[RMDB]
RNA sequence: GGGAACGACUCGAGUAGAGUCGAAAAAGACUAGGUACGCCUAGUCAAAAUGUGAAGCAAAUGAUGAUAAACUGGAUCUGACUGACUGUGCUGAGUCUGUUCAAUCCAACCCUGAGCUUCAUGUUAACAAGAUCUAGAUUUUCGAAUCUAGAUCUUGAAAAGAAACAACAACAACAAC
Reactivity to DMS in 0.01 (KOAc 150mM, MgCl2 10mM, bicine 150mM(pH8.5), 24C), signal-to-noise 9, nucleotides 027 to 126: a080g000a010c000u000a000g010g020u010a090c270g040c010c000u000a000g000u010c000a030a040a050a030u010g020u000g010a020a000g010c010a060a150a120u020g010a130u020g010a120u020a040a070a180c250u000g000g000a010u000c160u000g000a020c010u000g000a010c000u000g020u020g010c190u010g000a030g000u000c000u010g000u020u010c010a030a020u000c000c000a020a120c060c030c000u000g000a300g000c000u000u000c000a010u000g010u000u010a100a180
Reactivity to 2A3 in 0.01 (KOAc 150mM, MgCl2 10mM, bicine 150mM(pH8.5), 24C), signal-to-noise 9, nucleotides 027 to 126: a000g000a000c000u000a000g010g000u060a040c250g080c030c000u000a000g000u000c000a010a010a000a010u070g000u000g010a000a000g000c020a060a130a140u120g100a060u050g030a060u190a150a130a050c080u030g000g000a020u030c060u090g000a000c000u000g010a000c000u030g030u160g200c130u180g060a000g000u000c000u020g060u140u030c000a000a010u000c000c000a010a070c010c000c000u040g030a010g010c000u000u000c000a000u030g030u020u060a080a060

This 177-nucleotide RNA was probed chemically with DMS and 2A3.
The reactions ran in a buffer of 150 mM KOAc, 10 mM MgCl2 and 150 mM bicine (pH 8.5), at 24 C.
DMS adducts were read by reverse transcription with MarathonRT.
2A3 is a SHAPE reagent: it acylates the 2'-hydroxyl of flexible nucleotides of all four kinds.
Values cover nucleotides 27 to 126.
Values are in units of 0.01, from 0 to 300, in steps of 10.
It was measured as part of the RMDB libraries RFM100 and RFMREP.